[RMDB]
RNA sequence: GGGAACGACUCGAGUAGAGUCGAAAAGACGAGAGCAACGCAGAUCGGUCAGUUGCAGGCAGAUUUUGCGGCUGAUAUUGACGGCGUAAAAACAACCAUGAACGCUGGUUUUACGCAGGUUAAUCAGGCUAUUGCAAAUGAAAGCGACGCGCGGGCAUCUUACACGUUCGUUCGCGAACGUGUAAGAAAAAGAAACAACAACAACAAC
Reactivity to 2A3 in 0.01 (KOAc 150mM, MgCl2 10mM, bicine 150mM(pH8.5), 24C), signal-to-noise 1, nucleotides 027 to 156: g070a030c050g050a030g010a000g120c030a150a000c000g000c030a000g010a110u100c040g010g030u030c030a020g050u060u030g030c020a020g030g120c010a010g020a140u060u090u140u080g000c010g000g040c000u000g020a090u010a070u100u020g000a000c000g010g010c000g000u000a000a000a000a000a040c060a030a010c000c090a150u170g070a090a000c050g040c160u000g010g000u030u000u000u000a010c000g020c040a000g030g210u040u000a000a000u020c030a020g130g000c020u090a100u200u270g020c010a000a000a050u060g040a080a020a040g040c030g030a010c030g020c000g000c000g080g040g000c030a020